An RNA of 207 nucleotides, treated with 2A3 and DMS and read out base by base. The RNA was probed in 150 mM KOAc, 10 mM MgCl2 and 150 mM bicine (pH 8.5) at 24 C. For 2A3, 876 sequencing reads were counted. For DMS the reverse transcriptase was MarathonRT. High DMS reactivity at an A or C suggests that its Watson-Crick edge is free.
RNA sequence: GGGAACGACUCGAGUAGAGUCGAAAAGAAACGCCACUUUAUGUUUCGAAACCAUCUCUGUUUAGUUUUUGAAAUGCUGUCCUACAACCUCUAUGACUUGCUGAGAAACACCAAUUUCCGAGGGGUCUCUUUGAACCUAACACGAAAGUUUGCGCAAAUCAUCGAGUUGAUUCGUCAACUCGAUGAUAAAAGAAACAACAACAACAAC
Reactivity to 2A3 in 0.01 (KOAc 150mM, MgCl2 10mM, bicine 150mM(pH8.5), 24C), signal-to-noise 2, nucleotides 027 to 156: g040a020a070a000c050g020c040c020a050c040u080u170u080a160u210g000u020u020u030c020g030a090a000a000c060c000a090u040c040u050c020u040g070u100u110u080a090g000u050u090u000u140u160g140a070a090a030u090g010c020u020g030u050c000c000u050a140c010a110a060c020c020u040c040u080a060u120g050a090c010u020u120g040c050u060g000a010g000a100a090a020c030a040c020c010a090a160u040u130u080c040c080g020a070g000g000g000g000u000c010u000c000u080u070u130g020a000a010c000c010u030a070a010c050a020c150g100a070a040a040g090u080u080u080g080c070g000c070a080a150
Reactivity to DMS in 0.01 (KOAc 150mM, MgCl2 10mM, bicine 150mM(pH8.5), 24C), signal-to-noise 1, nucleotides 027 to 156: g010a060a060a050c060g000c050c090a040c060u010u010u010a070u010g030u000u000u000c010g010a100a150a090c100c030a040u010c030u010c080u000g010u010u000u020a080g000u000u000u000u000u000g010a090a040a060u000g040c090u000g020u010c010c020u020a090c020a090a040c040c020u010c040u000a120u000g000a040c040u010u000g020c020u010g000a090g000a090a080a080c030a090c060c060a050a130u000u000u000c060c060g030a090g000g050g040g020u000c020u020c060u010u000u010g000a050a080c010c020u010a040a060c010a170c110g010a030a080a090g010u000u000u000g000c010g000c040a090a090